[RMDB]
RNA sequence: GGGAACGACUCGAGUAGAGUCGAAAACAACAAGCUGCAGGGCAGUGACUGGUUCGCCAGCGUCACGGCGUCGAUCACCGGCGCGUCUAACGCGUUCGCGGAUUUCGUGUUCGGCCUGCUCAAUGGCGAACGUAUCUAACUUCGGUUAGAUACGUUCAAAAGAAACAACAACAACAAC
Reactivity to DMS in 0.01 (KOAc 150mM, MgCl2 10mM, bicine 150mM(pH8.5), 24C), signal-to-noise 8, nucleotides 027 to 126: c060a110a130c170a100a140g010c080u000g020c220a140g000g010g020c010a060g010u010g010a140c050u000g010g000u000u000c150g020c000c030a060g010c090g000u000c050a060c080g000g010c060g020u000c030g000a080u010c110a130c180c030g010g000c000g000c010g020u000c120u010a080a050c040g010c000g000u000u000c110g030c130g020g000a060u000u000u010c080g020u000g010u000u010c040g010g010c050c010u000g010c020u000c080a080a080u000g010g010c140
Reactivity to 2A3 in 0.01 (KOAc 150mM, MgCl2 10mM, bicine 150mM(pH8.5), 24C), signal-to-noise 8, nucleotides 027 to 126: c040a010a010c020a050a030g050c040u060g000c050a060g040g060g000c010a030g020u020g180a100c020u040g030g020u030u030c070g030c030c010a020g010c020g070u060c020a020c070g050g010c010g020u030c010g020a100u100c050a030c180c010g000g000c000g000c000g020u010c080u100a090a030c030g020c020g060u190u200c050g020c060g060g010a040u050u110u110c100g000u060g050u060u050c010g030g010c000c000u010g000c000u000c010a060a140u080g040g000c040